The data come from the RNA Mapping Database (RMDB), library M2RFPK. This 207-nucleotide RNA was probed chemically with DMS and 2A3. 2A3 is a SHAPE reagent: it acylates the 2'-hydroxyl of flexible nucleotides of all four kinds.

RNA sequence: GGGAACGACUCGAGUAGAGUCGAAAAAAUAAUCUUCAGGGCAGGGUGAAAUUCCCGAUCGGCGGUAAAGUCCGCGAGCCGAACGAAAAAGGUUUGGCAGGAACCGGUGAGAUUCCGGUACCGACUGCAAAGCCUCAACACUUCGGUGUUGAGGCAACGUUUUAUCACUAUUCGUAGUGAUAAAACGAAAAGAAACAACAACAACAAC
Reactivity to DMS in 0.01 (KOAc 150mM, MgCl2 10mM, bicine 150mM(pH8.5), 24C), signal-to-noise 1, nucleotides 027 to 156: a100a010u000a090a070u000c080u010u000c030a130g010g050g000c080a040g090g100g040u010g000a080a090a170u000u000c000c000c030g000a090u000c000g010g010c000g000g000u010a090a190a060g000u000c000c080g000c000g010a300g010c090c020g000a030a070c000g090a050a120a160a170a210g000g000u000u010u000g000g000c000a100g030g020a030a040c000c020g090g010u000g040a270g000a300u000u000c000c020g010g000u000a030c000c010g010a050c080u010g010c090a100a150a130g010c000c030u000c000a000a000c000a010c000u000u000c300g090g010u000g010u010u000g020a020g010g010c000a000a000
Reactivity to 2A3 in 0.01 (KOAc 150mM, MgCl2 10mM, bicine 150mM(pH8.5), 24C), signal-to-noise 1, nucleotides 027 to 156: a000a000u200a020a080u040c040u120u070c040a060g000g110g010c020a010g000g040g010u030g020a030a050a060u080u020c000c000c000g000a100u110c010g000g010c000g000g000u000a000a000a000g000u000c010c000g000c000g000a010g000c000c000g010a010a010c010g080a090a060a080a050a080g070g000u000u000u000g010g000c010a010g030g010a010a000c000c010g000g000u000g000a000g010a000u000u000c000c000g000g000u000a000c000c000g000a000c010u040g000c020a120a020a040g000c000c000u010c000a000a040c000a000c000u050u050c200g110g000u000g000u000u000g000a000g000g000c010a000a000

For DMS the reverse transcriptase was MarathonRT. Reactivities are given for positions 27 through 156. The RNA was probed in 150 mM KOAc, 10 mM MgCl2 and 150 mM bicine (pH 8.5) at 24 C.